Annotation
This 207-nucleotide RNA was probed chemically with 2A3. The RNA was probed in 150 mM KOAc, 10 mM MgCl2 and 150 mM bicine (pH 8.5) at 24 C.
[RMDB]
RNA sequence: GGGAACGACUCGAGUAGAGUCGAAAAGAAUGUUACGAUUAUGUGACUAGCCAUAAUCGAUGAAGGUACUCGACUUCAUCGUAACAUUGAAUUGUCAGUGCGUACUGGCUAGUCACAGUACGGCAGACUACACUCCUAGUCUGCCACUGACUAGGAGGCUGGAUUACGGAUUCGUCCGUAAUCCAGCAAAAGAAACAACAACAACAAC
Reactivity to 2A3 in 0.01 (KOAc 150mM, MgCl2 10mM, bicine 150mM(pH8.5), 24C), signal-to-noise 1, nucleotides 027 to 156: g050a060a080u160g010u040u030a030c010g000a170u040u060a050u050g000u020g000a000c000u000a000g000c000c000a020u070a170a030u060c010g010a000u020g000a000a010g060g010u100a070c090u030c050g140a020c030u020u030c000a000u000c000g010u040a020a030c000a020u000u100g070a080a210u260u030g180u190c020a000g000u000g060c130g130u070a170c120u040g000g040c000u030a010g000u000c000a000c000a000g000u010a000c010g010g000c080a020g000a110c010u030a010c040a040c080u000c000c000u000a010g020u000c010u060g140c010c000a000c000u030g000a000c000u000a030g020g010a000g020